[RMDB]
RNA sequence: GGGAACGACUCGAGUAGAGUCGAAAACAAACUAAGUUUAAGGACAAUUCGCUUAACCCACAACAGUUGGGUGUGAUUGAUGUUUACAACCUGUUGAGUGGAUUGGAACAAAGUACGCGUGAUACCGUCUAUAUAACCUUUUCGAAGGUUAUAUAGAAAAAGAAACAACAACAACAAC
Reactivity to 2A3 in 0.01 (KOAc 150mM, MgCl2 10mM, bicine 150mM(pH8.5), 24C), signal-to-noise 9, nucleotides 027 to 126: c040a030a060a030c040u160a100a070g080u060u110u070a080a040g060g020a030c010a030a020u030u010c020g000c010u060u070a100a110c010c020c020a030c030a180a100c020a090g090u210u100g130g040g020u040g010u020g020a070u060u110g080a080u130g130u070u100u070a040c020a030a040c000c020u050g030u100u090g050a020g000u030g010g010a030u010u030g030g020a050a010c010a030a090a020g050u070a030c070g020c040g090u040g030a020u050a080c020c010g020
Reactivity to DMS in 0.01 (KOAc 150mM, MgCl2 10mM, bicine 150mM(pH8.5), 24C), signal-to-noise 9, nucleotides 027 to 126: c070a080a160a100c100u000a070a210g010u000u000u000a100a130g010g020a270c030a020a040u000u000c030g020c010u000u010a080a080c010c040c020a140c060a090a060c130a080g010u010u010g010g010g010u000g010u000g000a040u010u010g010a110u010g010u000u000u000a070c040a030a030c040c020u000g010u000u000g010a040g030u000g010g000a020u000u000g000g000a070a060c070a040a120a080g010u000a040c180g010c090g010u000g010a110u010a110c060c050g010